Background: Conditions: 150 mM KOAc, 10 mM MgCl2 and 150 mM bicine (pH 8.5), 24 C. Structure probing data (2A3) for a 207-nucleotide construct. It was measured as part of the RMDB library RSTRND. For 2A3 the reverse transcriptase was SuperScript II with manganese.
[RMDB]
RNA sequence: GGGAACGACUCGAGUAGAGUCGAAAAAGCCAUCCGUCGCGCACAUCACCACUGCUGGCUCCUUCGGGUACCACAGCCAAGCUCCUCGCCGAGGCCGUCUACAAGACUCAACGUUAGAUGGCGCGCGACGUUUCUAAUAGAGUCGAGUCCCGCUCGUCCUUCCCUUAUUCUUCGGAAUAAGGGAAGGAAAAGAAACAACAACAACAAC
Reactivity to 2A3 in 0.01 (KOAc 150mM, MgCl2 10mM, bicine 150mM(pH8.5), 24C), signal-to-noise 2, nucleotides 027 to 156: a020g130c050c010a140u060c030c000g010u000c000g010c010g010c000a000c010a100u140c010a020c090c020a090c110u030g080c050u020g020g010c010u040c010c030u090u060c160g100g000g000u090a040c020c020a070c060a070g030c020c000a090a010g010c010u050c060c020u110c020g130c100c120g040a020g000g000c030c000g010u020c010u100a150c100a150a000g030a130c010u090c170a110a040c100g050u120u070a010g020a020u000g000g000c040g010c050g000c020g060a010c010g000u040u040u000c050u090a130a180u060a060g000a020g050u020c010g010a010g080u000c000c000c000g020c040u030c010g080u000